The record gives the reactivity of an RNA of 177 nucleotides to DMS. The DMS profile rests on 1,180 reads.

[RMDB]
RNA sequence: GGGAACGACUCGAGUAGAGUCGAAAAUACUUUGUGGCUUUUUGGCACAGAUCAUGCAGGAAUAGCAACACAAGCUGUUUUUGAAAGGUAUCUUAAAAAUAUUGGUAAAAGUAAGGAUGAUUUUGAAAAACGUGGAGAUAUUCGUAUCUCCACGUUUAAAAGAAACAACAACAACAAC
Reactivity to DMS in 0.01 (KOAc 150mM, MgCl2 10mM, bicine 150mM(pH8.5), 24C), signal-to-noise 2, nucleotides 027 to 126: u010a070c060u010u000u000g020u020g010g000c020u000u000u010u010u010g020g060c050a080c090a110g000a070u010c090a140u000g000c040a020g020g000a040a020u000a020g010c000a080a060c130a080c200a110a090g020c030u000g030u000u000u000u000u000g000a090a090a080g000g000u000a000u010c030u010u020a010a040a090a100a050u000a060u000u000g030g010u000a010a020a070a070g000u000a040a070g010g000a080u000g000a140u020u000u000u000g000a100a100

Values cover nucleotides 27 to 126.